[RMDB]
RNA sequence: GGGAACGACUCGAGUAGAGUCGAAAAACCUUUGUGGUCUCGAGCACAUCGAUCUACAGUGCCAGUAUCCCAUUGGGAUACGGUAAUACUGUAGGGAGUGCUAAGACAGGACCACUCUGGUAAAACUAACCGGUUGUCUUCGGACAACCGGUUAGAACGGACAUAAAUGAUUCGUCAUUUAUGUCCGAAAAGAAACAACAACAACAAC
Reactivity to 2A3 in 0.01 (KOAc 150mM, MgCl2 10mM, bicine 150mM(pH8.5), 24C), signal-to-noise 7, nucleotides 027 to 156: a000c010c000u010u010u010g000u000g010g000u010c060u060c090g070a010g040c000a010c010a200u300c050g050a060u030c000u000a000c000a000g000u000g010c020c030a110g010u000a010u010c020c020c100a300u200u300g000g000g000a000u000a010c020g000g000u070a180a120u120a110c000u000g000u000a000g000g010g010a010g000u000g000c000u010a070a040g120a070c080a050g020g020a000c000c000a000c000u000c000u000g000g010u030a050a040a050a070c010u000a010a000c000c000g010g010u000u000g000u000c010u020u080c250g050g000a000c000a000a000c000c000g000g000u000u000a000g000a000a000
Reactivity to DMS in 0.01 (KOAc 150mM, MgCl2 10mM, bicine 150mM(pH8.5), 24C), signal-to-noise 2, nucleotides 027 to 156: a040c020c000u000u000u010g000u000g020g020u000c000u000c060g000a080g000c000a040c010a250u000c140g000a080u000c000u000a010c000a010g050u000g010c010c010a160g040u000a020u010c000c000c000a300u000u010g020g020g020a020u000a000c000g010g020u000a020a090u000a100c000u000g000u000a020g000g010g020a040g020u000g020c000u000a070a120g030a210c280a080g000g000a020c000c000a010c030u000c030u010g000g070u000a040a060a160a150c020u000a000a020c000c000g020g020u000u000g000u000c000u000u000c300g010g010a000c010a010a010c000c000g000g000u000u000a000g000a050a130